[RMDB]
RNA sequence: GGGAACGACUCGAGUAGAGUCGAAAAGAACACGUCUCGGGAGGACGCUAAACUCGCCCUGGUCGGGAUGGGUUUAACGACCCCUCGGGUUUCCUAGUUCCUAAAACUAGGUGGUGGAGUCAUAUAAAAAACUUCUACACGUUCGCGUGUAGAAGAAGGUUCUUAAUCUGUUCGCAGAUUAAGAACCAAAAGAAACAACAACAACAAC
Reactivity to 2A3 in 0.01 (KOAc 150mM, MgCl2 10mM, bicine 150mM(pH8.5), 24C), signal-to-noise 1, nucleotides 027 to 156: g050a070a000c060a010c060g060u010c020u020c000g000g040g000a060g060g040a010c000g010c050u000a010a010a000c000u010c010g000c010c020c000u130g020g160u240c150g010g000g000a120u040g030g040g000u000u050u010a060a000c010g020a040c000c000c010c000u000c010g000g010g000u010u070u030c000c000u010a000g000u040u050c000c030u090a070a040a030a000c010u010a020g000g000u000g070g050u040g020g050a090g040u090c090a060u080a020u290a230a090a000a000a050a090c000u000u000c000u020a000c000a000c000g010u040u050c190g000c000g050u000g000u010a000g000a000a000g000a010a010

Overview:
Conditions: 150 mM KOAc, 10 mM MgCl2 and 150 mM bicine (pH 8.5), 24 C. Chemical mapping of a 207-nucleotide RNA with 2A3. Source: RMDB library M2RFPK, as collected in RNAgym. 2A3 adducts were read by reverse transcription with SuperScript II with manganese.